Structure probing data (2A3 and DMS) for a 177-nucleotide construct. The DMS profile rests on 1,097 reads. For DMS the reverse transcriptase was MarathonRT. It was measured as part of the RMDB library TTRDEL.
[RMDB]
RNA sequence: GGGAACGACUCGAGUAGAGUCGAAAAGAUAUGGAUCGUCCUUAGCAAUGAUGGUAACAAGUAUCGGAAACGAUACCGCCCUUGAGCUAAGUGACGAUCCUAAGUCAAAGAACGGUUCGCCGUUCAACACCAUCUCGGAGUUCGCUCCGAGAUGGUGAAAAGAAACAACAACAACAAC
Reactivity to 2A3 in 0.01 (KOAc 150mM, MgCl2 10mM, bicine 150mM(pH8.5), 24C), signal-to-noise 2, nucleotides 027 to 126: g020a020u070a050u130g000g000a000u000c020g010u010c000c010u000u000a010g010c010a090a210u190g100a060u130g010g050u120a280a120c090a230a090g000u010a020u010c010g030g070a060a010a010c030g000a000u040a010c010c020g000c040c000c030u060u080g070a080g010c010u020a010a030g010u160g060a000c010g010a000u000c000c000u010a020a000g000u020c000a000a020a180g010a000a010c000g000g050u080u100c300g110c130c000g000u010u000c000a000a000
Reactivity to DMS in 0.01 (KOAc 150mM, MgCl2 10mM, bicine 150mM(pH8.5), 24C), signal-to-noise 2, nucleotides 027 to 126: g000a070u010a300u000g040g000a000u000c000g030u020c000c000u000u000a000g030c000a090a170u020g000a010u000g010g000u010a030a050c220a090a190g010u000a000u000c000g000g000a130a080a220c010g010a010u000a000c000c190g000c000c000c070u010u000g020a300g000c000u000a000a000g010u000g010a000c000g000a000u000c000c010u010a010a060g000u010c060a040a050a050g000a010a010c000g010g010u000u010c200g000c010c000g020u010u000c000a070a180